[RMDB]
RNA sequence: GGGAACGACUCGAGUAGAGUCGAAAAUAAAGUGGAGAGAAAGUUUAUACAAGAAGUAAUAACUAACUCGGUGGUGUUUUUAAAGGUAGAAGGGAGUUCUUUUAUGGAGGACGAUAUACACCACCAAUAACUGGAAUCAGUUCGCUGAUUCCAGUUAAAAAGAAACAACAACAACAAC
Reactivity to DMS in 0.01 (KOAc 150mM, MgCl2 10mM, bicine 150mM(pH8.5), 24C), signal-to-noise 1, nucleotides 027 to 126: u020a050a100a100g010u000g000g000a180g000a020g000a080a200a090g000u000u010u000a140u000a040c020a140a140g000a100a150g010u000a050a170u000a020a060c040u010a030a300c050u000c110g030g000u000g010g000u000g000u040u000u000u000u020a000a180a080g010g020u000a070g020a040a120g000g040g000a250g000u000u020c010u000u040u000u040a040u020g000g000a050g000g010a050c020g000a170u000a060u010a000c020a040c010c000a000c000c000a060a100
The record gives the reactivity of an RNA of 177 nucleotides to DMS.
For DMS, 539 sequencing reads were counted.
Reactivities are given for positions 27 through 126.
Source: RMDB library OK2TST, as collected in RNAgym.